[RMDB]
RNA sequence: GGGAACGACUCGAGUAGAGUCGAAAAAAAACGCAGUGGGUUAACCAAAGUUUGAGUUGUCGAAAACGUUUGGUUGUAGCCUUGAGUAUCAAAGGCGGUACUGGCAAGCACUUCUAAGAAGUUAUAACCCCUAUACCAUAUUCGUAUGGUAUAGGGGAAAAGAAACAACAACAACAAC
Reactivity to 2A3 in 0.01 (KOAc 150mM, MgCl2 10mM, bicine 150mM(pH8.5), 24C), signal-to-noise 2, nucleotides 027 to 126: a000a000a000a010c070g000c020a030g000u100g090g070g020u090u060a000a000c000c000a010a000a000g010u000u020u030g090a090g000u130u190g140u300c030g070a000a010a010a030c100g050u020u000u020g000g060u010u040g100u050a010g010c000c000u040u070g080a040g080u090a060u190c090a110a080a030g070g000c050g040g020u020a020c050u070g060g040c010a000a020g040c010a030c030u050u000c010u090a200a190g020a090a030g050u090u160a150u120a300a130
Reactivity to DMS in 0.01 (KOAc 150mM, MgCl2 10mM, bicine 150mM(pH8.5), 24C), signal-to-noise 5, nucleotides 027 to 126: a070a030a050a080c140g010c050a030g020u000g020g000g010u010u000a040a020c010c010a020a020a050g010u000u000u000g010a270g010u010u010g010u000c050g010a150a020a010a010c010g010u000u000u000g010g010u000u000g020u010a180g010c010c000u000u000g000a160g020u000a050u010c090a050a060a100g000g010c040g000g010u000a030c040u010g020g010c060a070a100g010c100a020c030u000u000c020u010a110a100g010a040a040g010u000u020a080u010a130a190